[RMDB]
RNA sequence: GGGAACGACUCGAGUAGAGUCGAAAAAGAUUCCUCCACUUUUGAUCCCUCAUCUUACGUGCCAUGUAUGCAGAUUUUGCUAACGUGGUGAAAUGAGGGAUCAAAAGUGGAGGAAUCUGAAAUUACACGUUACAACUACUUUCGAGUAGUUGUAACGAAAAGAAACAACAACAACAAC
Reactivity to 2A3 in 0.01 (KOAc 150mM, MgCl2 10mM, bicine 150mM(pH8.5), 24C), signal-to-noise 1, nucleotides 027 to 126: a000g000a020u010u010c000c000u000c000c000a000c040u060u040u010u000g000a040u030c000c020c040u000c030a000u040c080u110u160a100c090g150u110g000c000c000a000u000g030u070a060u090g000c060a100g020a300u080u260u260u000g030c010u060a090a010c020g000u010g000g000u040g000a010a010a000u000g000a000g000g000g000a000u020c000a000a000a000a000g010u000g000g000a020g000g000a010a000u000c040u000g000a000a000a000u000u000a010c050a000
Reactivity to DMS in 0.01 (KOAc 150mM, MgCl2 10mM, bicine 150mM(pH8.5), 24C), signal-to-noise 5, nucleotides 027 to 126: a010g000a020u000u000c000c000u000c000c000a010c000u010u000u000u000g000a010u000c000c000c000u000c000a020u000c130u010u020a120c260g040u020g000c010c000a010u000g010u000a130u010g000c000a030g010a230u020u040u020u000g020c000u010a190a050c000g020u000g000g000u010g020a040a070a000u000g000a020g020g000g000a000u000c010a000a000a000a000g030u000g000g000a000g000g000a000a000u000c000u000g000a050a070a080u020u010a070c160a200